[RMDB]
RNA sequence: GGGAACGACUCGAGUAGAGUCGAAAAUCUCAUAAGUUACGGGUUUCGGGGCAUCGGAACCGAUUUUAAGCUGGUUCGUUGUCGACGAAACCUGCAGACUAUGGGAAAACCCGACGUUCGCGUCGGGGUCUCUUACAUAGUUCGCUAUGUAAGAGACAAAAGAAACAACAACAACAAC
Reactivity to 2A3 in 0.01 (KOAc 150mM, MgCl2 10mM, bicine 150mM(pH8.5), 24C), signal-to-noise 7, nucleotides 027 to 126: u010c010u010c000a000u040a060a080g000u000u020a010c010g000g010g000u000u000u010c010g000g000g020g000c000a010u010c060g160g020a010a020c000c010g010a030u090u100u070u230a140a070g070c100u100g050g000u000u000c000g000u010u010g020u020c060g120a300c000g000a010a000a000c000c000u000g000c000a010g010a010c000u000a000u010g000g000g000a020a080a020a030c010c010c000g000a000c000g020u050u100c300g000c000g100u000c000g000g000g010
Reactivity to DMS in 0.01 (KOAc 150mM, MgCl2 10mM, bicine 150mM(pH8.5), 24C), signal-to-noise 5, nucleotides 027 to 126: u000c000u000c000a020u000a030a080g010u000u000a080c030g000g000g000u000u000u000c000g010g010g000g000c040a010u000c010g040g010a000a010c010c010g010a070u010u010u000u020a110a190g010c140u010g030g010u000u000c000g000u000u000g010u000c020g000a170c010g010a000a010a010c010c000u000g010c020a050g020a030c010u000a010u010g000g000g000a030a070a120a300c010c000c000g000a010c000g020u000u010c250g020c020g000u000c000g000g000g000

An RNA of 177 nucleotides, treated with 2A3 and DMS and read out base by base.
The reactions ran in a buffer of 150 mM KOAc, 10 mM MgCl2 and 150 mM bicine (pH 8.5), at 24 C.
For DMS, 7,378 sequencing reads were counted.
2A3 adducts were read by reverse transcription with SuperScript II with manganese.